[RMDB]
RNA sequence: GGGAACGACUCGAGUAGAGUCGAAAAGAUAUGGAAUCGUGAAGGCUACAUUGGUGUCGGAAACGACACUCAAUUAGCCCACGAUUCCUAAGUCAAAGUACAGUUCGUCUUCGGACGAACUGUACAACAUAUCUUAUUCCUUCGGGAAUAAGAUAUGAAAAGAAACAACAACAACAAC
Reactivity to 2A3 in 0.01 (KOAc 150mM, MgCl2 10mM, bicine 150mM(pH8.5), 24C), signal-to-noise 4, nucleotides 027 to 126: g010a010u050a030u140g010g010a010a000u010c000g000u030g110a300a120g040g010c020u060a020c060a220u000u020g010g000u000g000u010c010g000g020a050a040a030c010g000a000c000a010c000u080c010a010a010u020u030a000g000c000c000c000a000c000g000a000u000u010c000c000u000a050a010g000u000c050a180a050a080g000u000a000c000a000g000u010u010c000g000u000c010u060u160c300g090g000a000c000g000a000a000c000u000g000u000a000c000a000a000
Reactivity to DMS in 0.01 (KOAc 150mM, MgCl2 10mM, bicine 150mM(pH8.5), 24C), signal-to-noise 7, nucleotides 027 to 126: g010a050u000a300u000g000g000a000a000u000c000g020u000g000a240a160g020g010c000u000a000c300a010u000u000g010g010u000g010u010c000g020g000a110a090a230c000g010a000c000a000c000u010c010a010a010u000u000a020g010c000c010c010a000c000g010a010u000u000c000c000u000a020a060g010u000c020a130a090a160g010u000a010c000a000g010u000u000c000g020u000c000u000u020c220g020g000a010c000g010a000a000c010u000g010u000a000c000a070a200
Overview:
This 177-nucleotide RNA was probed chemically with 2A3 and DMS. The RNA was probed in 150 mM KOAc, 10 mM MgCl2 and 150 mM bicine (pH 8.5) at 24 C. DMS (dimethyl sulfate) methylates the pairing face of unpaired adenines and cytosines. For DMS the reverse transcriptase was MarathonRT. The DMS profile rests on 14,953 reads.